[RMDB]
RNA sequence: GGGAACGACUCGAGUAGAGUCGAAAAGAUAUGGAGCUAUCCUAUACGCUCCCAGUCGGAAACGACUGGAGAGCAGGAGUAGCUCCUAAGUCAAACUGCGAUGCAUUGUUCGCAAUGCAUCGCAGAACAUGGGAUCAAUGUUCGCAUUGAUCCCAUGAAAAGAAACAACAACAACAAC
Reactivity to DMS in 0.01 (KOAc 150mM, MgCl2 10mM, bicine 150mM(pH8.5), 24C), signal-to-noise 2, nucleotides 027 to 126: g000a000u000a040u010g000g010a000g020c000u000a030u000c010c000u000a250u010a130c180g000c000u000c000c000c000a000g010u000c000g010g000a000a020a030c000g010a010c000u000g000g000a070g000a010g030c010a010g000g000a020g000u000a000g010c000u000c010c000u000a000a050g000u000c000a120a100a260c010u000g000c000g020a010u000g000c000a020u000u000g000u000u010c230g020c010a000a000u000g000c000a000u000c000g010c000a000g010a050a110
Reactivity to 2A3 in 0.01 (KOAc 150mM, MgCl2 10mM, bicine 150mM(pH8.5), 24C), signal-to-noise 1, nucleotides 027 to 126: g000a010u010a010u050g000g000a000g030c000u010a020u040c000c020u220a290u060a300c300g020c010u000c000c020c000a010g000u020c000g010g000a020a010a010c000g000a000c000u020g000g010a110g000a000g020c040a000g000g010a100g120u080a000g000c000u000c000c000u000a000a000g000u000c010a090a080a090c020u000g010c000g000a000u000g000c020a000u000u020g040u130u150c300g020c120a000a000u000g000c000a000u000c010g010c000a000g000a000a000